[RMDB]
RNA sequence: GGGAACGACUCGAGUAGAGUCGAAAACGCCCAUGGCAGCGGAUCCGGCCCACAAGUGGAGGCUUCGAACUCCCACCUGGCCGUCCUCCGGACGGCGGGUCACCGGUCAGGCGGUUCCGUCCCACGGCCGGUCAGUUUGAUUCGUCAAACUGACCGGAAAAGAAACAACAACAACAAC
Reactivity to 2A3 in 0.01 (KOAc 150mM, MgCl2 10mM, bicine 150mM(pH8.5), 24C), signal-to-noise 1, nucleotides 027 to 126: c080g050c000c000c000a060u050g060g000c080a120g000c030g010g000a000u000c020c000g180g040c140c010c000a080c010a050a040g030u130g250g000a000g000g000c050u160u050c190g020a000a000c010u000c000c000c000a000c000c000u030g280g000c000c000g010u000c000c000u100c120c270g000g000a030c030g020g040c060g000g000g000u000c000a090c050c050g040g000u040c020a010g010g010c000g000g000u050u070c000c030g040u060c030c000c000a100c050g020g010